[RMDB]
RNA sequence: GGGAACGACUCGAGUAGAGUCGAAAAAGGUGCAUGCCGAGGUGCGGUAGGCCUCGUUAACAAACCGCAAAAAUAUAGUCGCAAACGACGAAAACUACGCACUCGCAGCUUAAUAACCUGCGCUGAGAAAACCCGACUACCUUCGGGUAGUCGGGAACUAACCUGUAACGUUCGCGUUACAGGUUAGAAAAGAAACAACAACAACAAC
Reactivity to 2A3 in 0.01 (KOAc 150mM, MgCl2 10mM, bicine 150mM(pH8.5), 24C), signal-to-noise 3, nucleotides 027 to 156: a000g030g020u050g020c070a060u120g090c030c010g010a010g000g010u040g010c030g010g020u020a030g040g030c000c010u010c010g150u100u040a060a010c020a030a040a000c020c010g020c050a060a040a000a100a000u230a040u060a100g010u010c020g030c100a090a130a120c090g020a000c000g050a000a020a050a020c050u100a020c060g020c060a010c000u030c020g000c010a000g000c000u040u020a070a000u020a050a050c010c000u010g010c010g000c100u050g030a030g080a140a090a000a010c000c000c000g000a000c000u000a000c000c000u010u030c180g060g000g000u010a000g000u020c000g000g010g000a000a000
Reactivity to DMS in 0.01 (KOAc 150mM, MgCl2 10mM, bicine 150mM(pH8.5), 24C), signal-to-noise 2, nucleotides 027 to 156: a000g010g030u000g020c060a060u000g100c080c030g010a090g020g030u000g040c100g060g050u000a130g030g010c050c000u010c040g000u000u010a060a200c110a070a030a080c060c100g020c080a040a050a080a130a200u000a110u020a150g010u000c020g030c070a100a060a180c040g010a020c000g000a000a040a090a080c010u000a030c010g000c000a060c020u000c010g020c040a050g000c010u010u000a100a150u000a130a090c090c000u000g010c010g030c060u000g010a160g000a090a050a030a130c000c000c000g000a040c020u000a000c000c000u000u010c300g040g030g030u000a000g020u000c020g000g010g020a010a010